[RMDB]
RNA sequence: GGGAACGACUCGAGUAGAGUCGAAAAGGCACUGGGGCCCUUGAGGCCUGACAUUGCCGGCCCUUGUUCCCCCUUACAGGUGUGGCCCAGGUUACGUGGGUAACCCCAGUGUGCAAGGGGGCCAGUGCCUGCCAGAGAGUAAGUGGGACCAUGGCCAACCAGUAAUGGAUUUCGAUCCAUUACUGGUAAAAGAAACAACAACAACAAC
Reactivity to DMS in 0.01 (KOAc 150mM, MgCl2 10mM, bicine 150mM(pH8.5), 24C), signal-to-noise 1, nucleotides 027 to 156: g020g000c000a040c040u000g010g060g040g000c000c020c020u000u010g020a220g000g030c000c110u000g000a040c010a100u010u000g020c010c000g020g000c000c000c020u000u010g000u000u010c030c000c010c000c010u010u000a040c020a040g030g040u020g010u000g010g010c000c020c130a100g040g030u020u010a050c080g020u010g080g010g030u000a070a060c020c000c000c040a220g020u000g030u000g000c150a120a080g000g010g010g130g040c040c010a040g040u000g020c000c010u000g000c010c000a120g010a180g000a170g020u000a040a080g010u000g010g000g030a070c010c080a150u000g030g010c020c010a210
Reactivity to 2A3 in 0.01 (KOAc 150mM, MgCl2 10mM, bicine 150mM(pH8.5), 24C), signal-to-noise 2, nucleotides 027 to 156: g010g000c000a000c010u010g000g000g000g000c030c020c010u120u220g050a240g120g000c000c050u020g020a020c010a060u040u060g020c030c040g010g000c030c010c000u050u060g050u060u070c010c000c010c000c000u000u010a000c000a060g080g000u080g030u040g090g010c000c080c000a010g040g030u190u230a060c170g250u300g140g030g030u040a040a050c000c000c000c000a100g040u170g040u040g230c070a100a100g000g000g020g000g040c000c000a020g000u000g000c000c000u000g000c010c000a050g010a000g000a010g090u040a040a000g030u040g020g000g020a020c060c000a020u040g000g000c020c010a010